[RMDB]
About this RNA
The record gives the reactivity of an RNA of 177 nucleotides to 2A3 and DMS. Values cover nucleotides 27 to 126. It was measured as part of the RMDB library 15KREP. For 2A3 the reverse transcriptase was SuperScript II with manganese.
RNA sequence: GGGAACGACUCGAGUAGAGUCGAAAACGGGCGCUCCCCUCGAUACGCCUUCGAGGGGGUUCACACCUCCAGUCGGCGGGCCGGCUACUCUUCUUUCCCUUCUCUCGUCUUCCUCGGUCAACCUCUUAGAUAAUAAGUUGUUCGCAACUUAUUAUCUAAAAGAAACAACAACAACAAC
Reactivity to 2A3 in 0.01 (KOAc 150mM, MgCl2 10mM, bicine 150mM(pH8.5), 24C), signal-to-noise 2, nucleotides 027 to 126: c010g020g020g000c040g020c040u080c010c000c010c000u010c000g000a020u050a090c080g070c020c070u010u000c020g020a110g000g000g000g000g000u040u040c020a040c000a010c010c000u010c020c010a030g080u030c010g020g050c000g030g000g010c020c010g010g020c000u050a050c010u030c000u070u040c010u040u060u040c010c000c000u030u030c030u000c000u010c000g040u000c000u050u030c010c010u010c040g010g010u040c030a030a040c020c020u040c020u010u010
Reactivity to DMS in 0.01 (KOAc 150mM, MgCl2 10mM, bicine 150mM(pH8.5), 24C), signal-to-noise 3, nucleotides 027 to 126: c130g010g010g020c090g020c080u000c000c010c000c010u000c000g020a080u000a090c160g000c100c100u000u000c010g010a080g010g000g000g010g020u000u010c100a110c100a130c030c020u000c030c020a150g000u000c080g010g010c040g010g010g030c030c040g010g010c020u000a050c030u000c040u000u000c060u000u000u000c030c010c000u000u000c030u000c020u000c050g010u000c030u010u000c040c010u000c060g030g010u000c060a060a210c060c020u010c060u000u000
Record summary: The DMS profile rests on 3,083 reads.